[RMDB]
RNA sequence: GGGAACGACUCGAGUAGAGUCGAAAAAUUUGCUCAAUGCUCUCUGGAGCUUCUGUGUUACCACGUUGGAGAGAGUGUUGAUUUGGACUCCCUGAUAGGGCUUAGGCAUCUUUCAGCCCUUGCUUCGCAAACCCAAUCAGUUCGCUGAUUGGGUUUGAAAAGAAACAACAACAACAAC
Reactivity to 2A3 in 0.01 (KOAc 150mM, MgCl2 10mM, bicine 150mM(pH8.5), 24C), signal-to-noise 4, nucleotides 027 to 126: a000u050u040u080g000c000u010c010a000a000u030g010c000u000c010u000c010u050g230g020a140g130c000u110u000c100u140g040u020g090u120u150a120c100c010a010c030g020u000u070g090g050a030g000a010g000a000g000u010g050u030u020g020a070u130u030u130g090g040a030c010u040c000c000c000u020g050a080u090a030g020g000g000c000u020u030a040g050g020c060a080u010c070u040u060u020c020a030g010c000c000c000u000u030g000c010u030u030c000g000
Reactivity to DMS in 0.01 (KOAc 150mM, MgCl2 10mM, bicine 150mM(pH8.5), 24C), signal-to-noise 5, nucleotides 027 to 126: a020u000u000u010g020c050u000c000a020a020u000g010c000u000c000u000c010u000g010g010a180g010c020u000u030c030u020g040u010g020u020u040a190c220c020a030c040g000u000u010g010g000a030g010a010g010a020g010u000g000u000u000g000a070u010u020u030g030g010a120c130u010c010c000c000u000g000a130u010a020g000g020g020c010u000u000a070g020g010c040a020u010c040u000u000u000c090a130g030c000c010c000u000u000g000c100u010u000c260g000

This 177-nucleotide RNA was probed chemically with 2A3 and DMS. Conditions: 150 mM KOAc, 10 mM MgCl2 and 150 mM bicine (pH 8.5), 24 C.